Background
An RNA of 207 nucleotides, treated with 2A3 and read out base by base. Reactivities are given for positions 27 through 156. The RNA was probed in 150 mM KOAc, 10 mM MgCl2 and 150 mM bicine (pH 8.5) at 24 C. 2A3 adducts were read by reverse transcription with SuperScript II with manganese. Values are in units of 0.01, from 0 to 300, in steps of 10. It was measured as part of the RMDB library OK3TST. For 2A3, 783 sequencing reads were counted.
[RMDB]
RNA sequence: GGGAACGACUCGAGUAGAGUCGAAAAGACAGUCUGAUUUCUGAGUCAGAGCUCUUAUUGUAAACGCAGACUAAGUAAUAAUAAAAGCUCAAACAAAAACCAAAGCGCGCACGCGCGCGCACUCAAAUCGUAGGCUUGUAAAAGAAUUGAUGCAACACUCAUUAAAUCAUUUCGAUGAUUUAAUGAGAAAAGAAACAACAACAACAAC
Reactivity to 2A3 in 0.01 (KOAc 150mM, MgCl2 10mM, bicine 150mM(pH8.5), 24C), signal-to-noise 2, nucleotides 027 to 156: g060a010c030a000g030u010c000u010g030a030u030u060u130c060u050g020a010g020u060c100a050g040a020g050c010u000c020u030u040a050u040u020g020u060a220a110a030c080g020c060a080g030a110c050u030a130a000g080u030a040a190u010a130a000u010a000a070a010a000g040c040u060c000a030a040a120c090a080a250a060a030a020c120c050a120a100a020g000c010g010c010g000c090a030c130g140c020g000c000g000c010g010c090a010c000u020c000a020a070a120u000c020g120u110a050g040g000c030u070u220g070u110a050a050a080a000g070a050a050u120u160g020a020u130g020c040a060a000c040a050